Description: This 177-nucleotide RNA was probed chemically with 2A3. Conditions: 150 mM KOAc, 10 mM MgCl2 and 150 mM bicine (pH 8.5), 24 C. The 2A3 profile rests on 495 reads. 2A3 adducts were read by reverse transcription with SuperScript II with manganese. Values cover nucleotides 27 to 126.
[RMDB]
RNA sequence: GGGAACGACUCGAGUAGAGUCGAAAAAGAAACCGCGGGGUGAAGAACCGCGGCCUGCACCUCUUCACUGCGGGGCCGGCUGGCAGGUUCUCCGGUGGGUCCGGCGGACCCAGGGCCUCGAACAAAAGGGUAUUCUUAUCUUCGGAUAAGAAUACCCAAAAGAAACAACAACAACAAC
Reactivity to 2A3 in 0.01 (KOAc 150mM, MgCl2 10mM, bicine 150mM(pH8.5), 24C), signal-to-noise 1, nucleotides 027 to 126: a040g050a090a060a000c010c000g000c000g040g010g050g010u100g130a190a070g010a140a050c010c000g000c000g000g010c000c000u010g000c000a220c010c000u040c030u190u090c090a170c260u120g000c140g000g000g000g000c000c000g100g010c000u070g030g080c090a150g050g000u000u000c010u010c010c000g200g030u110g090g070g030u040c010c040g140g050c060g010g010a000c000c000c000a000g020g000g010c000c000u000c000g030a100a060c150a020a090a000a000
It was measured as part of the RMDB library OK1LIB.